[RMDB]
RNA sequence: GGGAACGACUCGAGUAGAGUCGAAAAUGGAGCUAAUCUCAUAAAACCGUUCUCAGUUCGGAUUGUAGGCUGCAACUCGCCUACAUGAAGCUGGAAUCGCUAGUAAUCGCGGAUCAGCAUGCCGCGGGUACUACUGCCAUUUCGAUGGCAGUAGUACAAAAGAAACAACAACAACAAC
Reactivity to 2A3 in 0.01 (KOAc 150mM, MgCl2 10mM, bicine 150mM(pH8.5), 24C), signal-to-noise 9, nucleotides 027 to 126: u120g040g010a020g030c080u110a080a060u100c020u020c050a030u150a040a100a050a050c030c010g000u020u000c210u010c020a060g010u220u240c020g000g010a010u020u000g000u010a000g010g000c020u070g030c080a090a100c050u070c160g000c000c000u000a000c000a000u010g000a000a010g000c000u000g000g030a010a020u080c030g020c100u060a030g040u120a130a040u070c000g000c000g010g010a050u080c090a060g070c040a060u190g020c000c000g000c000g000g020
Reactivity to DMS in 0.01 (KOAc 150mM, MgCl2 10mM, bicine 150mM(pH8.5), 24C), signal-to-noise 4, nucleotides 027 to 126: u040g000g010a060g020c090u020a060a070u010c040u000c050a050u010a070a090a080a120c220c040g010u010u000c010u040c010a020g010u020u060c080g010g000a060u000u000g030u000a000g000g000c020u000g000c170a110a100c230u030c140g010c000c010u000a010c000a000u010g010a300a100g020c010u000g000g010a030a010u010c100g000c040u030a070g000u010a080a090u000c010g000c000g010g010a030u010c130a110g020c160a050u010g010c000c000g000c010g000g010
The record gives the reactivity of an RNA of 177 nucleotides to 2A3 and DMS. For DMS the reverse transcriptase was MarathonRT. Source: RMDB library RFM100, as collected in RNAgym. The RNA was probed in 150 mM KOAc, 10 mM MgCl2 and 150 mM bicine (pH 8.5) at 24 C. The DMS profile rests on 6,969 reads.